[RMDB]
RNA sequence: GGGAACGACUCGAGUAGAGUCGAAAAGCGCUAGCUAGCUAGCGUGUCGCACGGUACACUACAUGUACGAGCACUCAUGAGCUAGGAGCGACACAUGCCAUGUAGUCCAUGCAGCAUGGUACCAUGCGGCUAUGAAGCUCUUCGGAGCUUCAUAGCCAAAAGAAACAACAACAACAAC
Reactivity to 2A3 in 0.01 (KOAc 150mM, MgCl2 10mM, bicine 150mM(pH8.5), 24C), signal-to-noise 3, nucleotides 027 to 126: g020c000g000c000u030a070g070c030u050a030g030c000u020a010g050c090g030u010g020u020c050g010c040a030c070g070g010u030a010c040a010c030u240a030c030a110u130g020u050a010c050g020a020g010c030a010c020u050c010a080u130g040a010g020c000u030a050g010g090a040g060c000g090a010c020a000c000a060u060g020c040c000a000u020g060u110a030g050u050c040c030a030u120g020c030a030g030c000a030u020g040g030u000a050c000c030a020u090g010c020
Reactivity to DMS in 0.01 (KOAc 150mM, MgCl2 10mM, bicine 150mM(pH8.5), 24C), signal-to-noise 3, nucleotides 027 to 126: g010c020g020c000u010a020g020c040u000a060g020c000u010a040g000c050g010u000g010u010c040g020c030a050c030g040g000u000a050c070a140c110u000a170c110a300u000g010u000a010c010g000a170g000c030a090c030u010c010a100u020g000a060g020c030u000a150g000g000a080g010c060g000a100c120a050c090a060u000g020c060c050a030u000g000u030a110g000u000c140c030a040u010g020c070a170g010c080a070u020g000g030u000a040c030c010a100u010g000c220